[RMDB]
RNA sequence: GGGAACGACUCGAGUAGAGUCGAAAACUAUUGGAGCUAGAAACGAUGAAGACAGAAUACCGGGAAUGAUGGAAUCGUUUGAUUGGCACAAGUCCAACAAAACAGCGACUUAUAGGGAUUUGGUUAAGUACCACAUAUGAUUCGUCAUAUGUGGUACAAAAGAAACAACAACAACAAC
Reactivity to 2A3 in 0.01 (KOAc 150mM, MgCl2 10mM, bicine 150mM(pH8.5), 24C), signal-to-noise 6, nucleotides 027 to 126: c020u020a100u080u110g050g020a010g010c020u050a050g100a040a090a000c020g020a020u070g050a060a030g050a020c020a030g140a130a050u100a200c010c080g020g040g050a050a080u060g040a020u060g030g060a050a050u020c020g010u010u040u090g110a190u020u030g010g000c020a040c030a230a020g020u020c020c000a040a010c020a020a140a020a020c040a040g030c020g100a070c050u100u090a070u080a110g060g050g040a090u110u090u120g090g000u080u040a150a030
Reactivity to DMS in 0.01 (KOAc 150mM, MgCl2 10mM, bicine 150mM(pH8.5), 24C), signal-to-noise 8, nucleotides 027 to 126: c040u000a070u000u010g010g010a180g010c040u010a080g010a070a070a050c040g000a060u010g010a230a110g010a080c060a050g000a130a090u010a090c060c060g000g010g010a090a100u010g010a070u000g000g010a110a070u010c060g010u000u000u000g000a140u000u010g010g010c030a150c160a070a090g010u010c010c010a050a050c110a050a060a080a100c120a070g000c060g000a050c070u000u000a080u010a070g010g010g000a110u000u000u010g010g000u000u000a070a120